[RMDB]
RNA sequence: GGGAACGACUCGAGUAGAGUCGAAAAGCGUACUACGAAGCGAUGAAAGUAUGGAAGAAGUAUAGAACUACAACUUUCCCAAAUAGGAAAGUUGCUAUAUGUAAACAUACUGGAGCUUCGUAUCGCAAACCUUGUCUAUGUUCGCAUAGACAAGGAACGACAAUAUCGGGUUCGCCCGAUAUUGUCGAAAAGAAACAACAACAACAAC
Reactivity to DMS in 0.01 (KOAc 150mM, MgCl2 10mM, bicine 150mM(pH8.5), 24C), signal-to-noise 1, nucleotides 027 to 156: g020c000g080u000a010c090u000a000c000g000a000a000g000c000g000a190u020g040a220a000a090g000u010a000u000g020g000a040a210g050a140a300g010u000a000u000a060g040a060a220c040u010a150c000a010a000c000u010u020u000c000c000c040a080a080a200u000a010g000g000a000a050a000g040u000u000g020c000u010a000u000a010u000g010u000a060a080a300c010a000u010a000c000u020g000g000a090g000c000u000u000c000g000u000a010u000c000g000c000a090a030a060c050c000u000u000g040u000c010u000a010u000g000u000u000c300g020c000a000u000a000g000a050c000a000a020g030g000a010a070
Reactivity to 2A3 in 0.01 (KOAc 150mM, MgCl2 10mM, bicine 150mM(pH8.5), 24C), signal-to-noise 3, nucleotides 027 to 156: g000c010g030u070a050c030u010a000c010g000a000a000g000c020g070a080u080g060a120a030a020g020u000a000u000g000g060a160a210g000a010a000g260u010a000u010a010g040a080a080c130u210a070c300a000a000c000u000u000u030c040c010c000a130a300a200u210a040g000g000a000a000a010g000u000u000g000c000u000a010u000a010u070g020u010a000a000a000c000a000u000a010c000u000g010g010a000g000c000u000u000c000g000u000a000u040c000g010c000a010a010a120c000c000u000u000g010u000c000u000a000u010g000u010u040c180g000c140a000u000a000g010a000c000a000a000g000g010a000a070
Source information: Structure probing data (DMS and 2A3) for a 207-nucleotide construct. Values cover nucleotides 27 to 156. It was measured as part of the RMDB library RNAMAK. The RNA was probed in 150 mM KOAc, 10 mM MgCl2 and 150 mM bicine (pH 8.5) at 24 C. 2A3 adducts were read by reverse transcription with SuperScript II with manganese.